[RMDB]
RNA sequence: GGGAACGACUCGAGUAGAGUCGAAAAGUCCUAGCGAAAAGCUAGGACAAGUGCAUCUAAAAUGUCAUCGCGAGCCUUUAGAUGACAAGAUGCACAAGGCUCGCAAGUCGAGGAGAACUCGACAAAACGUACCCUCGCUCUUCGGAGCGAGGGUACGAAAAGAAACAACAACAACAAC
Reactivity to 2A3 in 0.01 (KOAc 150mM, MgCl2 10mM, bicine 150mM(pH8.5), 24C), signal-to-noise 1, nucleotides 027 to 126: g000u000c020c000u000a010g000c030g070a230a070a060a020g000c000u000a000g000g000a000c000a000a000g080u000g000c000a000u000c010u060a040a060a150a260u110g050u000c000a000u000c010g010c080g140a100g080c020c000u080u290u140a000g050a000u000g000a000c000a010a010g020a000u020g000c010a020c000a000a000g010g000c030u000c000g040c080a130a000g070u020c000g000a000g000g000a060g030a070a060c000u000c000g060a050c000a000a100a000a000

This 177-nucleotide RNA was probed chemically with 2A3. The 2A3 profile rests on 673 reads.